RNA sequence: GGGAACGACUCGAGUAGAGUCGAAAAGGUCGCAUCUUCGGAUGCGACCAAAGAACCUCAAAGUGACGCAAACUUCCGCGACAGAAGGAGGAAACGAGGUAAAAAGUGCACCCUUCGGGGUGCACAACAGACAUAUUUUGUUCGCAAAAUAUGUCUGAAAAGAAACAACAACAACAAC
Reactivity to DMS in 0.01 (KOAc 150mM, MgCl2 10mM, bicine 150mM(pH8.5), 24C), signal-to-noise 4, nucleotides 027 to 126: g030g010u000c000g030c000a010u010c000u000u010c230g020g000a010u000g000c000g010a010c000c000a000a050a060g020a090a100c010c000u000c050a080a080a120g010u000g010a110c100g010c080a070a110a150c060u010u000c020c040g010c110g010a120c210a080g000a070a050g000g000a070g010g000a070a060a090c140g000a040g000g010u010a070a060a060a110a090g010u000g020c010a000c000c000c000u000u000c160g020g000g000g000u000g000c000a000c000a020a080
Reactivity to 2A3 in 0.01 (KOAc 150mM, MgCl2 10mM, bicine 150mM(pH8.5), 24C), signal-to-noise 3, nucleotides 027 to 126: g020g000u000c000g020c000a010u010c000u040u070c160g040g000a010u020g010c020g010a000c000c000a010a000a000g000a000a030c000c000u000c030a130a110a020g100u090g090a040c020g010c070a050a170a170c020u060u050c050c020g080c060g100a060c040a100g180a140a040g050g050a010g010g000a060a090a000c080g000a020g010g030u110a060a120a010a060a010g000u000g000c010a000c000c000c000u000u070c150g040g000g000g000u020g010c010a000c000a000a000